[RMDB]
The data come from the RNA Mapping Database (RMDB), library M2RFPK. Structure probing data (DMS and 2A3) for a 207-nucleotide construct. For 2A3, 1,678 sequencing reads were counted. Values cover nucleotides 27 to 156. For 2A3 the reverse transcriptase was SuperScript II with manganese. For DMS, 1,929 sequencing reads were counted. Conditions: 150 mM KOAc, 10 mM MgCl2 and 150 mM bicine (pH 8.5), 24 C.

RNA sequence: GGGAACGACUCGAGUAGAGUCGAAAAAUCACCGGUGGGGAACCCCAUACGGCAACGGCGUAAAAGUAAAUGCUAACCAAUCCGUGGUAUCUACGCGACGGAGCAUCCACGGAUAACUCUAACAAGGCUAAGCGUCUCGGUUUCGACCGAGACGCAAACCUAAACGUUAGUUCGCUAACGUUUAGGUAAAAGAAACAACAACAACAAC
Reactivity to DMS in 0.01 (KOAc 150mM, MgCl2 10mM, bicine 150mM(pH8.5), 24C), signal-to-noise 1, nucleotides 027 to 156: a160u010c010a030c000c000g020g010u000g000g000g010g000a080a080c180c000c000c020a100u000a090c060g050g020c000a070a090c030g020g010c020g020u010a060a080a100a120g020u000a040a100a130u000g020c030u000a120a100c040c020a200a100u000c000c020g040u000g000g030u000a110u000c030u010a040c050g010c110g020a200c220g030g000a070g020c040a180u010c000c010a060c010g030g000a040u000a000a070c060u000c020u050a080a040c070a070a130g040g000c080u000a080a200g000c000g080u010c000u010c000g000g000u000u000u000c280g000a040c000c000g000a000g000a000c030g010c010a000a000
Reactivity to 2A3 in 0.01 (KOAc 150mM, MgCl2 10mM, bicine 150mM(pH8.5), 24C), signal-to-noise 3, nucleotides 027 to 156: a000u040c010a000c020c010g010g000u000g000g010g010g080a080a110c050c040c000c020a040u100a130c010g000g050c030a080a050c070g040g000c040g030u040a030a050a060a060g060u060a010a070a080u120g030c040u040a060a060c040c020a040a010u000c010c000g010u000g000g010u060a050u070c050u110a080c050g030c020g160a080c130g070g000a030g030c010a030u030c000c000a000c020g030g020a000u010a010a010c000u020c010u090a060a060c070a090a090g100g030c040u180a140a030g000c000g000u010c000u000c000g000g000u010u070u110c090g040a060c000c000g000a000g000a000c000g000c000a000a000